Structure probing data (2A3 and DMS) for a 177-nucleotide construct. Source: RMDB library M2PK50, as collected in RNAgym. For 2A3 the reverse transcriptase was SuperScript II with manganese. DMS adducts were read by reverse transcription with MarathonRT. The RNA was probed in 150 mM KOAc, 10 mM MgCl2 and 150 mM bicine (pH 8.5) at 24 C.
[RMDB]
RNA sequence: GGGAACGACUCGAGUAGAGUCGAAAAUGAUAGGCUUUCGAGCCUAUCAACUGCGUAGCUGCGUUAAAAUUUUAGCUACGCUUAAUUAAAAUUUUUAACGCAAAUAUAAGGUCUUCGGACCUUAUAACAUGAGAGAUUCAUUCGUGAAUCUCUCAUGAAAAGAAACAACAACAACAAC
Reactivity to 2A3 in 0.01 (KOAc 150mM, MgCl2 10mM, bicine 150mM(pH8.5), 24C), signal-to-noise 2, nucleotides 027 to 126: u050g000a000u010a010g000g000c010u130u030u080c280g020a000g000c000c020u010a000u010c000a000a000c000u010g020c020g000u010a010g010c060u050g040c040g010u000u000a030a180a150a260u150u140u130u250a010g010c010u010a000c000g000c000u010u050a010a010u030u070a000a080a040a010u030u170u040u050u090a000a000c010g000c000a000a110a040u090a010u000a010a000g020g010u000c000u040u090c180g120g010a000c010c000u000u010a000u000a010a020
Reactivity to DMS in 0.01 (KOAc 150mM, MgCl2 10mM, bicine 150mM(pH8.5), 24C), signal-to-noise 1, nucleotides 027 to 126: u010g000a040u010a020g000g000c000u000u000u000c150g010a010g030c000c000u000a010u000c000a020a150c080u000g010c010g020u000a020g000c040u000g020c000g010u000u000a000a020a080a180u000u010u000u010a030g030c010u000a010c040g020c010u000u020a010a050u000u000a000a090a070a070u000u000u000u000u000a000a000c010g010c000a150a130a260u000a000u000a000a000g010g000u000c000u000u020c160g030g010a020c000c000u000u000a000u000a010a130